[RMDB]
RNA sequence: GGGAACGACUCGAGUAGAGUCGAAAAGCUCUAGGAGACUAGAGCGAUACGUUAGAGAGCUCGUGGCAUCACUAACGGAUAGCCAGGUACGAGGUUGCCAGAGGACAUAGCUAUAGCUAUGUCCAAAGAGCUAUCUUAGGUUCGCCUAAGAUAGCUCAAAAGAAACAACAACAACAAC
Reactivity to DMS in 0.01 (KOAc 150mM, MgCl2 10mM, bicine 150mM(pH8.5), 24C), signal-to-noise 3, nucleotides 027 to 126: g010c000u000c000u010a010g000g000a300g000a190c000u000a010g010a010g000c010g000a080u000a000c000g000u010u020a000g000a060g000a030g010c050u020c200g010u020g000g000c040a090u000c010a090c010u000a000a020c040g000g000a080u020a070g030c030c020a140g000g040u000a040c050g000a050g010g010u010u000g000c050c040a130g000a230g000g020a000c000a010u000a010g030c000u010a140u040a150g000c000u000a010u000g000u000c000c000a000a010a050
Reactivity to 2A3 in 0.01 (KOAc 150mM, MgCl2 10mM, bicine 150mM(pH8.5), 24C), signal-to-noise 2, nucleotides 027 to 126: g000c000u000c000u000a020g020g010a040g040a100c010u010a000g010a010g000c040g000a040u040a030c000g000u030u060a020g020a010g000a020g040c070u030c160g160u160g090g010c060a160u000c000a000c040u010a040a030c010g030g000a030u050a010g050c040c050a080g030g050u060a040c080g060a100g170g040u140u080g010c020c010a000g030a100g150g000a010c000a010u000a000g000c000u100a010u060a300g000c000u010a000u040g000u000c000c000a000a000a000
The record gives the reactivity of an RNA of 177 nucleotides to DMS and 2A3. 2A3 adducts were read by reverse transcription with SuperScript II with manganese. Values cover nucleotides 27 to 126. The RNA was probed in 150 mM KOAc, 10 mM MgCl2 and 150 mM bicine (pH 8.5) at 24 C. High 2A3 reactivity points to a flexible backbone, as in loops and unpaired stretches.